[RMDB]
This 177-nucleotide RNA was probed chemically with DMS and 2A3. 2A3 adducts were read by reverse transcription with SuperScript II with manganese.

RNA sequence: GGGAACGACUCGAGUAGAGUCGAAAAGUCAAACUUGUUUGUUUUGGAAAGGAACUUCAUAGAGCUCUGAAAACCAGUUCAAAGGACAAACCCUUUGACUUUGGUAUUAAGUGAAUGUCACUUGGAGCUCUCACCAUACAUUCGUGUAUGGUGAGAGAAAAGAAACAACAACAACAAC
Reactivity to DMS in 0.01 (KOAc 150mM, MgCl2 10mM, bicine 150mM(pH8.5), 24C), signal-to-noise 3, nucleotides 027 to 126: g010u010c030a040a030a080c130u000u000g010u000u000u000g010u000u000u000u010g000g000a060a050a160g010g010a080a050c040u010u000c100a120u000a090g000a050g000c010u000c000u000g010a060a090a100a070c010c000a020g000u000u010c060a020a040a010g000g010a070c100a130a090a120c170c050c090u010u000u010g000a040c040u010u010u000g050g020u010a050u010u000a050a030g000u000g000a150a120u020g020u010c030a020c030u000u000g010g020a080g000
Reactivity to 2A3 in 0.01 (KOAc 150mM, MgCl2 10mM, bicine 150mM(pH8.5), 24C), signal-to-noise 2, nucleotides 027 to 126: g030u050c030a020a010a100c100u080u130g080u150u130u090g040u040u050u070u070g090g020a120a050a040g020g020a040a050c000u060u020c040a010u090a080g090a020g000c000u030c050u100g060a100a070a060a040c010c010a000g000u030u020c000a010a030a030g020g020a040c080a070a130a050c010c000c000u000u000u000g010a010c000u040u080u080g020g000u040a110u090u060a070a010g020u000g090a250a100u190g050u160c010a010c050u020u020g060g000a000g050